[RMDB]
RNA sequence: GGGAACGACUCGAGUAGAGUCGAAAAACAUCGCCUCAGACUGCUGACGAACCCCACGUUUUUGUGAGCGUGGGGUUUUGUCUUUCUGGGAUCAGGAUUGCGGGUUCGCCGCGAGCGGGUAGUCGAACGUCCUGCGUACGUUCGCGUACGCAGGACGAAAAGAAACAACAACAACAAC
Reactivity to DMS in 0.01 (KOAc 150mM, MgCl2 10mM, bicine 150mM(pH8.5), 24C), signal-to-noise 1, nucleotides 027 to 126: a060c080a120u000c060g020c130c010u000c010a020g000a120c300u000g010c170u010g000a030c030g010a000a010c000c000c010c000a030c010g000u000u000u000u010u030g000u010g000a020g010c000g020u000g000g000g000g010u000u000u000u010g010u000c010u000u000u000c040u000g000g000g000a130u000c130a090g010g030a100u030u000g010c040g000g000g010u000u000c200g010c040c020g000c060g000a040g000c060g010g020g000u000a050g030u010c030g000a080a070
About this RNA:
This 177-nucleotide RNA was probed chemically with DMS. The DMS profile rests on 1,151 reads. Reactivities are given for positions 27 through 126. For DMS the reverse transcriptase was MarathonRT. The data come from the RNA Mapping Database (RMDB), library OK2TST.